[RMDB]
Overview
The record gives the reactivity of an RNA of 207 nucleotides to 2A3. Values cover nucleotides 27 to 156. The RNA was probed in 150 mM KOAc, 10 mM MgCl2 and 150 mM bicine (pH 8.5) at 24 C. For 2A3 the reverse transcriptase was SuperScript II with manganese. The data come from the RNA Mapping Database (RMDB), library M2RFPK. As a SHAPE reagent, 2A3 marks flexible, mostly unpaired nucleotides at the ribose 2'-OH.

RNA sequence: GGGAACGACUCGAGUAGAGUCGAAAAGUUGAGAUCGUUUAACUUAAGUCUUUUUUAUUAGCUUAAAAAAACUAUAUACAAGUGGUGGUAGUCCGCCACUCUAAGGGGACGCCUUUAGAAGAAGAGGGAAAGGCACUAAGCUUCGGCUUAGUGCCAACAACUCAUCUUUGUUCGCAAAGAUGAGUUGAAAAGAAACAACAACAACAAC
Reactivity to 2A3 in 0.01 (KOAc 150mM, MgCl2 10mM, bicine 150mM(pH8.5), 24C), signal-to-noise 1, nucleotides 027 to 156: g030u030u070g040a030g000a180u070c050g000u020u030u040a040a040c020u020u050a060a020g060u120c040u060u290u060u060u060u110a170u160u100a110g050c000u070u060a080a050a000a000a000a020a000c140u190a150u060a040u090a230c010a120a030g000u000g020g020u020g010g060u090a090g060u030c030c000g010c020c000a000c000u000c000u000a010a000g000g030g000g030a000c020g140c010c010u020u010u030a060g000a090a000g020a000a030g070a060g000g040g000a070a040a100g030g000c000a000c000u000a000a000g030c000u040u120c230g000g010c000u000u010a000g000u010g000c040c000a000a000